[RMDB]
RNA sequence: GGGAACGACUCGAGUAGAGUCGAAAAUCGUGAGAUGUGGUGCCUCACGCGCUCGAGGCGUCCGUGGUCAGAGAGACCACUGACGCAAAAACUCGAGCGCAAAUAAAGGGCAUUACAUACAGAAUAACGAUAGUACUAAUUUCGAUUAGUACUAUCGAAAAGAAACAACAACAACAAC
Reactivity to 2A3 in 0.01 (KOAc 150mM, MgCl2 10mM, bicine 150mM(pH8.5), 24C), signal-to-noise 9, nucleotides 027 to 126: u120c050g030u080g110a300g010a080u010g000u000g000g010u000g000c000c000u080c020a080c120g000c000g000c000u000c000g000a000g020g000c000g000u000c000c010g000u000g000g000u000c040a050g100a060g020a020g000a300c000c000a000c000u000g000a000c000g000c000a070a090a030a030a040c000u000c000g000a000g000c000g000c000a000a000a000u150a030a060a010g000g000g000c000a000u000u010a000c000a000u020a040c020a020g190a090a100u190a090a020
Reactivity to DMS in 0.01 (KOAc 150mM, MgCl2 10mM, bicine 150mM(pH8.5), 24C), signal-to-noise 6, nucleotides 027 to 126: u020c050g000u060g000a100g000a010u000g000u000g010g010u000g010c000c010u000c140a130c260g020c000g020c000u000c000g010a010g000g000c000g000u000c000c090g020u000g000g000u000c000a200g010a150g010a200g010a010c000c000a000c000u000g000a010c000g000c030a040a020a040a110a300c000u000c010g000a000g000c000g010c000a010a050a070u040a080a120a120g000g000g000c000a000u000u010a000c010a020u000a010c040a090g010a100a080u040a060a170
Structure probing data (2A3 and DMS) for a 177-nucleotide construct. DMS adducts were read by reverse transcription with MarathonRT. Conditions: 150 mM KOAc, 10 mM MgCl2 and 150 mM bicine (pH 8.5), 24 C. It was measured as part of the RMDB library OK1LIB.